[RMDB]
RNA sequence: GGGAACGACUCGAGUAGAGUCGAAAACUGACCUUGUGAUCCACCCUCGGCCUCCCAAAGUACUGGGAUUACAGGCAUGAACCACUGUGCCCAGCUACAAUGUAUUCUUUCCCAAUGAUUUGUGGUGUCAGCCAGGACCUUGAUAGGGAUAAAUGGAAAUACUCAUCACUUUCGAGUGAUGAGUAUUAAAAGAAACAACAACAACAAC
Reactivity to 2A3 in 0.01 (KOAc 150mM, MgCl2 10mM, bicine 150mM(pH8.5), 24C), signal-to-noise 2, nucleotides 027 to 156: c030u030g060a070c000c010u040u030g040u040g020a070u000c020c030a030c020c000c000u040c030g000g000c000c050u030c010c020c000a000a020a040g070u040a010c050u010g040g000g000a030u120u190a060c030a000g010g050c020a080u080g060a030a070c090c000a090c090u010g000u020g000c010c000c010a020g000c000u030a010c010a010a080u130g080u060a110u140u030c100u050u040u080c000c000c000a070a060u080g050a100u050u100u110g080u040g010g040u030g050u050c000a010g000c000c000a030g020g050a080c000c000u120u130g060a120u130a040g020g000g040a040u140a060a130a050u100g050g000a040
Reactivity to DMS in 0.01 (KOAc 150mM, MgCl2 10mM, bicine 150mM(pH8.5), 24C), signal-to-noise 2, nucleotides 027 to 156: c050u000g040a070c010c030u010u000g000u000g010a080u000c010c020a070c020c030c030u000c020g000g000c020c010u010c010c010c010a040a080a140g010u000a030c040u000g010g020g000a100u010u000a020c040a040g000g030c050a110u000g020a090a100c070c040a100c030u010g010u010g010c020c010c000a100g010c020u010a030c040a060a070u010g000u000a120u000u000c080u000u000u000c010c000c010a120a190u010g010a150u000u000u020g010u010g030g030u000g020u000c070a090g060c010c010a120g010g000a060c010c010u010u000g000a160u010a080g010g010g030a090u000a040a070a150u010g040g000a100
The record gives the reactivity of an RNA of 207 nucleotides to 2A3 and DMS.
For 2A3 the reverse transcriptase was SuperScript II with manganese.
Reactivities are given for positions 27 through 156.
The RNA was probed in 150 mM KOAc, 10 mM MgCl2 and 150 mM bicine (pH 8.5) at 24 C.
DMS adducts were read by reverse transcription with MarathonRT.